Structure probing data (2A3 and DMS) for a 207-nucleotide construct. It was measured as part of the RMDB library RSTRND. Reactivities are given for positions 27 through 156.
RNA sequence: GGGAACGACUCGAGUAGAGUCGAAAAUAAUCGCGGGCCUGUGUUUGCGCUGCUCUGAGCGAACAUAUCGGCCCGACGCCAAACGGAGCUUGCUCUUACGUUGUGCACGGCGGACGUAGGGGGACUUUUGUCUGUGCUAAGACUCUGGCGCGUGCGGCAUAUAAACAGACUUCGGUCUGUUUAUAUGAAAAGAAACAACAACAACAAC
Reactivity to 2A3 in 0.01 (KOAc 150mM, MgCl2 10mM, bicine 150mM(pH8.5), 24C), signal-to-noise 4, nucleotides 027 to 156: u140a020a090u160c070g010c070g080g010g000c020c030u040g000u010g020u030u000u030g020c040g010c060u130g020c020u040c020u060g030a020g020c010g000a000a000c010a010u110a070u160c080g010g000c020c010c010g000a000c000g010c010c020a030a070a040c030g010g010a020g010c010u070u210g020c000u210c010u010u020a000c010g010u010u040g040u060g050c020a010c030g110g000c010g040g000a010c010g010u030a030g010g000g000g010g010a020c020u100u050u140u180g050u000c020u040g060u070g130c080u050a040a000g010a010c020u000c130u230g050g020c020g000c020g060u020g020c020g020g000
Reactivity to DMS in 0.01 (KOAc 150mM, MgCl2 10mM, bicine 150mM(pH8.5), 24C), signal-to-noise 2, nucleotides 027 to 156: u010a060a060u000c040g020c020g030g020g030c010c020u020g020u010g020u000u000u000g010c030g010c030u000g040c200u000c160u020g010a080g030c010g020a020a020c010a030u000a040u010c150g030g000c000c010c010g000a000c020g010c020c020a040a000a090c050g000g010a040g000c050u000u010g010c010u000c020u000u000a030c020g020u000u000g040u000g050c030a130c070g030g010c030g010g000a020c010g020u000a040g020g000g010g020g020a060c010u020u000u000u010g010u000c000u010g000u000g010c070u010a100a100g000a070c030u000c080u010g010g020c030g000c040g010u010g010c000g000g000